[RMDB]
RNA sequence: GGGAACGACUCGAGUAGAGUCGAAAAGCUGUCGCUUGGGUUCGACAUCUAUCGCGACGAUCCGCAAUCGCAGGUGGCGGUGACGACGGACGGUUUCGGUCGAUUGGGACACCUGAUCGGCGCGCUACACUACCCCACCUUUCGAGGUGGGGUAGUGAAAAGAAACAACAACAACAAC
Reactivity to DMS in 0.01 (KOAc 150mM, MgCl2 10mM, bicine 150mM(pH8.5), 24C), signal-to-noise 1, nucleotides 027 to 126: g000c070u000g010u000c060g020c020u010u000g000g030g020u010u010c030g020a300c080a000u000c000u000a050u020c070g010c100g000a110c030g000a080u000c000c010g020c070a300a070u000c050g050c050a200g040g020u010g040g000c010g000g000u000g000a080c100g000a170c030g010g000a060c160g050g000u010u000u000c020g010g010u000c010g000a050u010u000g000g000g010a110c140a070c020c010u000g010a020u000c030g000g010c020g010c070g030c100u000a150

The record gives the reactivity of an RNA of 177 nucleotides to DMS. DMS adducts were read by reverse transcription with MarathonRT. Source: RMDB library OK2TST, as collected in RNAgym. The reactions ran in a buffer of 150 mM KOAc, 10 mM MgCl2 and 150 mM bicine (pH 8.5), at 24 C.